Structure probing data (2A3 and DMS) for a 177-nucleotide construct. The RNA was probed in 150 mM KOAc, 10 mM MgCl2 and 150 mM bicine (pH 8.5) at 24 C. DMS adducts were read by reverse transcription with MarathonRT. It was measured as part of the RMDB library VIROID.
RNA sequence: GGGAACGACUCGAGUAGAGUCGAAAAAUGAGUCCGUUCCAAGGACGAAACCGUCUCUCCUGACUCCCGGUUCAGUGGUGGUUUGUGUAUCCCACACUGUUACUUCCGGUAACUAGGAGUUUGCAGCGUUCACAGUAAAGUUCGCUUUACUGUGAACAAAAGAAACAACAACAACAAC
Reactivity to 2A3 in 0.01 (KOAc 150mM, MgCl2 10mM, bicine 150mM(pH8.5), 24C), signal-to-noise 4, nucleotides 027 to 126: a000u160g000a010g020u030c100c030g040u080u040c040c020a070a050g030g000a010c040g040a200a030a020c070c020g040u000c020u000c000u000c010c000u020g030a030c000u040c020c000c010g000g010u030u010c000a000g020u040g130g080u040g020g110u100u150u150g210u050g050u080a100u140c000c000c000a000c000a000c000u010g040u090u050a080c090u160u050c000c010g000g000u010a000a010c010u020a020g000g010a010g000u010u130u080g030c030a020g030c000
Reactivity to DMS in 0.01 (KOAc 150mM, MgCl2 10mM, bicine 150mM(pH8.5), 24C), signal-to-noise 5, nucleotides 027 to 126: a080u010g020a180g010u000c050c060g020u000u000c060c070a150a110g000g000a020c020g000a080a070a150c110c020g000u000c050u000c020u000c030c010u000g020a050c050u000c300c010c000g010g000u000u000c030a050g010u000g010g010u000g010g010u000u010u000g010u010g000u010a080u000c100c050c000a220c010a020c010u000g000u000u000a030c090u000u000c010c010g000g010u010a030a030c110u000a040g000g000a020g010u000u000u010g020c100a120g010c210